[RMDB]
RNA sequence: GGGAACGACUCGAGUAGAGUCGAAAAGCUUCGCAGAUACAUCCAAGUCAUGUUUCUGCUCCGUUACAACAAUCUUCUGGUGCUUUAACGAAUGAAAUCAACUUAAUCGAUUUCAAUGAUUUGGACGCCGAUAAAUUAAUUUCGAUUAAUUUAUCGGAAAAGAAACAACAACAACAAC
Reactivity to DMS in 0.01 (KOAc 150mM, MgCl2 10mM, bicine 150mM(pH8.5), 24C), signal-to-noise 4, nucleotides 027 to 126: g000c080u010u010c080g030c120a080g000a130u020a140c140a230u000c020c020a010a010g000u010c030a020u010g010u000u010u000c010u010g010c020u000c020c010g000u000u020a080c170a070a160c250a090a090u030c080u000u000c120u030g000g010u010g010c030u010u000u000a030a020c020g010a100a060u000g000a000a000a010u000c000a050a110c220u010u030a090a110u030c120g000a000u010u000u010c010a040a080u000g000a030u000u000u000g000g000a120c280g000
Reactivity to 2A3 in 0.01 (KOAc 150mM, MgCl2 10mM, bicine 150mM(pH8.5), 24C), signal-to-noise 9, nucleotides 027 to 126: g040c060u180u170c090g000c070a030g020a080u120a090c040a040u010c010c010a020a010g020u020c010a020u100g020u010u040u010c010u010g010c000u010c010c010g080u110u100a070c050a200a030c030a120a250u080c080u190u060c070u220g020g000u020g020c010u020u040u050a050a010c050g080a140a120u100g000a010a010a000u010c020a020a090c070u140u300a100a050u230c110g000a000u000u010u000c000a010a050u030g010a020u010u010u010g020g000a030c050g010